[RMDB]
RNA sequence: GGGAACGACUCGAGUAGAGUCGAAAAGGCGCCUUCGGCAAAAUGCCUUCGCAGCAUAGCAACAAGGGUCAGGCUUCUCGGCAUGGCGCUGCUCUUGGCGACGCGUGGAUGCACACCACGUGAGCGACCCGAUCAUGGCGUUCGCGCCAUGAUCGGGAAAAGAAACAACAACAACAAC
Reactivity to 2A3 in 0.01 (KOAc 150mM, MgCl2 10mM, bicine 150mM(pH8.5), 24C), signal-to-noise 1, nucleotides 027 to 126: g030g070c050g090c000c000u080u100c130g030g020c000a000a000a000a180u110g000c020c000u020u140c010g060c060a120g120c010a120u110a180g030c010a010a010c000a170a010g080g040g000u150c040a020g080g040c000u080u000c060u030c010g060g060c020a040u060g010g060c110g000c040u020g000c020u000c000u040u070g150g000c010g050a090c010g000c000g000u000g000g080a080u180g110c220a120c000a030c100c000a040c020g000u040g080a060g020c020g000a070